[RMDB]
RNA sequence: GGGAACGACUCGAGUAGAGUCGAAAAGACCGUCAGUUAGACGGAAGAAGUGCAUAAAUCCACAGCGGAAGACAAGAUAGUGCACAAAUGUGGAUAAGCGUACGGAUCUACGUGCGCUAAACGUGAGCCAUUAGCGCACCUUCGGGUGCGCUAAUGGAAAAGAAACAACAACAACAAC
Reactivity to 2A3 in 0.01 (KOAc 150mM, MgCl2 10mM, bicine 150mM(pH8.5), 24C), signal-to-noise 2, nucleotides 027 to 126: g040a000c000c000g000u000c000a130g000u090u280a100g000a000c000g070g080a000a050g110a090a000g000u090g010c060a230u250a240a170a060u030c000c000a030c000a040g030c020g100g060a150a010g030a080c000a020a000g030a180u140a030g100u180g050c050a000c000a010a150a020u130g080u140g050g070a080u130a270a000g000c000g000u000a000c000g000g030a050u000c110u150a100c010g000u000g000c000g000c000u000a000a040a000c000g060u000g000a030g000
Reactivity to DMS in 0.01 (KOAc 150mM, MgCl2 10mM, bicine 150mM(pH8.5), 24C), signal-to-noise 1, nucleotides 027 to 126: g000a130c000c000g000u000c000a130g090u080u030a100g000a050c000g000g000a030a030g020a160a030g000u000g000c100a060u000a120a100a000u010c000c060a040c170a150g000c200g000g070a160a040g000a060c300a050a030g040a250u000a140g000u000g000c000a040c160a000a070a120u000g010u000g030g010a070u000a100a000g060c000g000u000a000c050g020g000a300u050c130u050a080c010g070u040g000c000g000c000u000a000a030a130c090g000u050g000a000g000